[RMDB]
RNA sequence: GGGAACGACUCGAGUAGAGUCGAAAACGUAGAUACUUCGGUAUCUACGAAAAAAACGCUGGCGUGGGACACAGCCGGAGCUAGCCUCGGAUAGUCUCAGUAAAACAGCAUGGUUCGCCAUGCUGAACUAGUGAGGAUUGUUCGCAAUCCUCACUAGAAAAGAAACAACAACAACAAC
Reactivity to 2A3 in 0.01 (KOAc 150mM, MgCl2 10mM, bicine 150mM(pH8.5), 24C), signal-to-noise 2, nucleotides 027 to 126: c030g000u010a020g000a000u020a010c030u050u040c210g090g000u010a010u000c000u000a000c000g000a000a000a000a000a000a000a000c110g020c100u100g000g050c050g070u060g020g030g000a030c020a020c040a110g020c000c000g080g000a000g040c040u050a020g000c010c000u030c020g010g020a040u050a100g030u020c010u020c040a030g070u180a020a110a040a040c010a010g000c000a010u000g000g030u070u040c190g040c090c000a000u000g000c010u010g000a000a010
Reactivity to DMS in 0.01 (KOAc 150mM, MgCl2 10mM, bicine 150mM(pH8.5), 24C), signal-to-noise 2, nucleotides 027 to 126: c020g000u000a000g020a000u000a000c000u010u020c140g020g000u000a000u010c000u000a010c000g000a000a010a080a060a040a020a100c210g000c010u000g000g010c050g050u000g020g000g000a020c020a090c100a160g010c030c000g040g010a050g020c030u000a120g020c080c020u010c040g000g000a160u000a070g010u000c010u010c000a100g010u000a040a070a080a160c020a010g010c000a010u000g010g000u000u000c220g030c020c000a000u010g000c020u000g010a020a110
The record gives the reactivity of an RNA of 177 nucleotides to 2A3 and DMS. 2A3 adducts were read by reverse transcription with SuperScript II with manganese. For DMS, 1,514 sequencing reads were counted. DMS adducts were read by reverse transcription with MarathonRT.